RNA sequence: GGGAACGACUCGAGUAGAGUCGAAAACGAUCCUCGAGAGAGGAUCGACGAGUCUUCGGACUCGAUUACCGCGAGGAUGUGCCGCGGGGCUACGAUGGUAUUGUGGGAAAGAAUACCAUUGUACCUUCUUGUCGUAGCCGAACAACUUGCACGUCAACCACGCUGCAUGAUUCGUCAUGCAGCGUGGAAAAGAAACAACAACAACAAC
Reactivity to 2A3 in 0.01 (KOAc 150mM, MgCl2 10mM, bicine 150mM(pH8.5), 24C), signal-to-noise 1, nucleotides 027 to 156: c020g000a010u000c030c000u040c000g060a110g000a000g000a000g050g000a000u000c000g000a000c000g000a000g000u040c000u000u140c300g020g000a000c000u000c000g000a070u140u240a080c000c000g000c000g000a010g110g000a030u030g000u000g000c000c020g030c000g080g070g000g000c000u000a000c000g010a010u140g000g000u060a010u000u030g030u000g000g000g140a150a190a020g170a030a220u180a060c000c020a000u030u050g000u000a000c000c020u160u260c120u140u120g000u000c000g000u000a030g000c000c000g050a120a020c040a000a030c110u050u050g090c000a000c000g000u000c000a000a000
Notes
Chemical mapping of a 207-nucleotide RNA with 2A3. For 2A3 the reverse transcriptase was SuperScript II with manganese. Reactivities are given for positions 27 through 156.